[RMDB]
RNA sequence: GGGAACGACUCGAGUAGAGUCGAAAAGAUAUGGACCUGAACUACGCUUUAACAGAGCGAUGAAAUCGGAAACGAUGGAGCUCUGAGAAGCGCAGGUCCUAAGUCAAAACCACCGUUCGCGGUGGAACUUCUAAUGGAACUUCGGUUCCAUUAGAAGAAAAGAAACAACAACAACAAC
Reactivity to DMS in 0.01 (KOAc 150mM, MgCl2 10mM, bicine 150mM(pH8.5), 24C), signal-to-noise 3, nucleotides 027 to 126: g010a040u020a300u010g010g020a030c000c000u010g000a090a090c100u020a300c020g020c020u000u000u000a110a200c020a010g010a000g010c010g010a090u010g000a070a110a010u000c000g000g000a080a070a150c020g010a020u000g000g010a100g000c000u000c000u000g010a270g000a000a020g000c030g010c000a000g020g010u000c000c010u000a000a050g000u000c010a060a060a120a120c000c000a010c000c010g030u010u010c210g030c000g010g010u000g000g000a010a070
Reactivity to 2A3 in 0.01 (KOAc 150mM, MgCl2 10mM, bicine 150mM(pH8.5), 24C), signal-to-noise 4, nucleotides 027 to 126: g030a020u060a070u140g010g000a010c020c010u010g020a070a060c110u180a050c220g040c020u050u040u020a250a060c040a010g010a000g010c020g070a140u050g040a050a080a010u010c010g010g040a050a010a030c010g000a010u010g000g030a020g000c000u000c000u010g020a060g030a020a000g000c000g000c000a000g010g000u000c000c000u000a030a000g010u000c000a000a010a100a180c010c000a000c020c000g020u070u090c300g010c020g140g000u000g000g000a010a040